[RMDB]
RNA sequence: GGGAACGACUCGAGUAGAGUCGAAAACUAGAUCAAAGGUUUGGGACAUUUACCACAACAAUGUGGCUCUUCCUAUAUCAAUCAGCUCAAUGACGGUUUUGUGUCUUAUUCUAAUAAUCUAUAUAUAACCGCUUGCCAUUCCAAUGAUGAAGAGGGAGACGAUUUAUGCUUUCGAGCAUAAAUCGUCAAAAGAAACAACAACAACAAC
Reactivity to 2A3 in 0.01 (KOAc 150mM, MgCl2 10mM, bicine 150mM(pH8.5), 24C), signal-to-noise 2, nucleotides 027 to 156: c020u010a040g000a150u080c160a100a020a120g030g000u030u040u040g050g020g000a050c090a050u160u190u130a050c040c060a070c040a100a090c060a150a250u140g000u030g020g040c000u000c000u060u000c020c040u100a080u000a080u270c060a100a020u040c000a000g030c120u100c020a000a020u040g030a090c010g040g020u000u020u140u090g040u030g070u030c020u070u090a060u200u060c070u070a140a120u040a190a060u140c000u020a090u000a090u000a000u030a300a050c000c020g000c010u050u100g040c030c000a050u170u000c030c020a050a050u040g040a090u030g030a020a030g050a150g050g000g040a040
The data come from the RNA Mapping Database (RMDB), library OK3TST.
An RNA of 207 nucleotides, treated with 2A3 and read out base by base.
2A3 adducts were read by reverse transcription with SuperScript II with manganese.
Conditions: 150 mM KOAc, 10 mM MgCl2 and 150 mM bicine (pH 8.5), 24 C.
Reactivities are given for positions 27 through 156.